[RMDB]
RNA sequence: GGGAACGACUCGAGUAGAGUCGAAAAUCCUAAGUCCUCUUGGAUUUAGUCAUGGUCCCUCAUACUACCCACCGCUGUCGGAAACGACAGCGAGGUAUGAGAAACAUGACUUGUCAGAGGAUAUGGAAAAACGAAGCCAGCUUCGGCUGGCUUCGAACACAGCAAUCACGUUCGCGUGAUUGCUGUGAAAAGAAACAACAACAACAAC
Reactivity to 2A3 in 0.01 (KOAc 150mM, MgCl2 10mM, bicine 150mM(pH8.5), 24C), signal-to-noise 2, nucleotides 027 to 156: u000c000c000u010a090a020g050u020c020c000u010c030u240u270g260g020a070u300u260u260a000g010u000c020a000u010g030g050u140c070c030c000u030c000a010u000a000c010u010a050c060c090c080a080c080c010g000c000u010g000u000c010g100g000a140a040a030c000g000a000c040a000g010c000g000a000g000g000u000a000u000g010a000g000a000a050a020c000a000u000g010a010c000u000u010g010u020c010a000g000a010g020g030a000u030a060u010g010g050a020a200a070a000a000c010g010a000a050g000c020c010a010g000c020u060u160c240g140g000c000u010g000g000c000u000u000c010g010a010a000